[RMDB]
RNA sequence: GGGAACGACUCGAGUAGAGUCGAAAACGGGCGUUGCAUCCUUCCACUUCUCGCGGCGGCACCACGAUGCGACGGUCGCGGGCUUCACGUCGAGAUGGCGGGCGAUCGACGAGAGGCGCCAGCCUUGCCAAUAGAGCGUGCGUGCGACCUUGCGCACCAACAAGCUCCACUUCGGUGGAGCUUGUUGAAAAGAAACAACAACAACAAC
Reactivity to 2A3 in 0.01 (KOAc 150mM, MgCl2 10mM, bicine 150mM(pH8.5), 24C), signal-to-noise 1, nucleotides 027 to 156: c010g050g010g000c130g030u000u070g090c090a120u190c000c000u060u000c000c020a040c120u060u080c070u050c030g050c050g110g000c020g000g050c050a050c100c000a040c030g160a180u100g020c100g050a040c130g040g000u010c000g000c050g000g040g020c000u230u160c040a020c010g040u050c010g060a040g060a190u050g000g000c000g000g020g000c040g080a110u070c030g040a100c060g100a060g000a080g090g070c010g000c040c040a000g020c000c000u000u080g100c000c000a090a090u110a100g080a010g000c000g030u030g020c030g130u040g020c000g010a050c030c020u050u100g090c000g010c000a020c000
An RNA of 207 nucleotides, treated with 2A3 and read out base by base. It was measured as part of the RMDB library OK3TST. For 2A3, 592 sequencing reads were counted.